Annotation:
Source: RMDB libraries RFM100 and RFMREP, as collected in RNAgym. An RNA of 177 nucleotides, treated with DMS and 2A3 and read out base by base. DMS adducts were read by reverse transcription with MarathonRT. Reactivities are rounded to 0.1 and cut off at 0 and 3. In probing experiments dimethyl sulfate is read out at A N1 and C N3, which are open when not base-paired.

RNA sequence: GGGAACGACUCGAGUAGAGUCGAAAAGAGGAUGGAGGUUAUCGAAUUUCGCGGAUCCUCCCGGCUGAGUGUGCAGAUCACAGCCGUAAGAAUUUCUUCAAACCAAGGGGGUGACUCCUUGAACAAACUUACAUGGAUUAUUCGUAAUCCAUGUAAGAAAAGAAACAACAACAACAAC
Reactivity to DMS in 0.01 (KOAc 150mM, MgCl2 10mM, bicine 150mM(pH8.5), 24C), signal-to-noise 9, nucleotides 027 to 126: g010a040g010g010a120u010g010g010a020g020g010u000u020a100u020c020g010a110a140u000u010u010c100g020c070g010g000a130u010c000c000u000c000c010c000g000g000c000u010g000a100g020u010g000u020g030c240a140g000a090u010c040a100c010a010g010c010c010g020u010a080a080g000a100a110u010u000u000c010u000u000c110a080a100a150c250c000a000a000g000g010g000g000g010u050g000a180c010u000c010c000u000u000g010a080a100c180a060a080a130
Reactivity to 2A3 in 0.01 (KOAc 150mM, MgCl2 10mM, bicine 150mM(pH8.5), 24C), signal-to-noise 9, nucleotides 027 to 126: g040a010g050g010a030u040g010g010a010g020g020u120u130a100u150c020g040a090a140u140u190u140c200g020c050g120g010a030u040c000c000u010c000c010c000g000g000c000u010g020a110g140u090g030u090g090c110a060g030a230u110c010a000c000a020g000c010c000g000u000a010a010g030a020a030u050u060u030c010u050u070c040a080a040a050c050c000a000a000g010g000g010g010g010u090g080a120c000u000c000c000u000u010g000a020a010c040a010a080a010